[RMDB]
RNA sequence: GGGAACGACUCGAGUAGAGUCGAAAAAGUGUAUAGCCAGAGAGCCAGUCAGAGGGCGCUAUCAUGCAAACUAGGGCUGGCUACUCUAGCACAGAAUCACAUCCCGAUAAUCAACAGUGCUAGAAGGGCAUAUGGAUAAGUUCGCUUAUCCAUAUGCAAAAGAAACAACAACAACAAC
Reactivity to 2A3 in 0.01 (KOAc 150mM, MgCl2 10mM, bicine 150mM(pH8.5), 24C), signal-to-noise 3, nucleotides 027 to 126: a020g020u030g000u020a070u090a100g030c020c020a000g030a000g000a000g040c000c000a000g000u010c000a000g000a020g070g030g020c010g000c030u070a150u300c070a060u260g010c000a010a010a010c020u010a010g000g040g000c000u000g000g000c000u020a010c000u000c000u000a000g010c010a000c010a020g190a060a060u110c010a010c010a050u020c000c000c020g010a100u180a130a080u080c040a010a090c010a100g050u010g090c020u070a040g040a110a070g080g080
Reactivity to DMS in 0.01 (KOAc 150mM, MgCl2 10mM, bicine 150mM(pH8.5), 24C), signal-to-noise 3, nucleotides 027 to 126: a120g020u000g000u010a090u000a120g010c060c090a050g010a010g000a060g000c010c000a020g030u010c020a010g020a010g000g010g020c300g010c010u000a070u020c160a110u010g000c030a040a300a170c020u010a000g030g020g000c010u000g010g000c000u000a000c010u000c000u000a000g000c000a070c130a100g000a090a050u010c030a020c030a130u000c000c000c000g000a120u000a030a100u020c120a060a110c160a110g000u000g010c040u010a070g000a100a150g000g000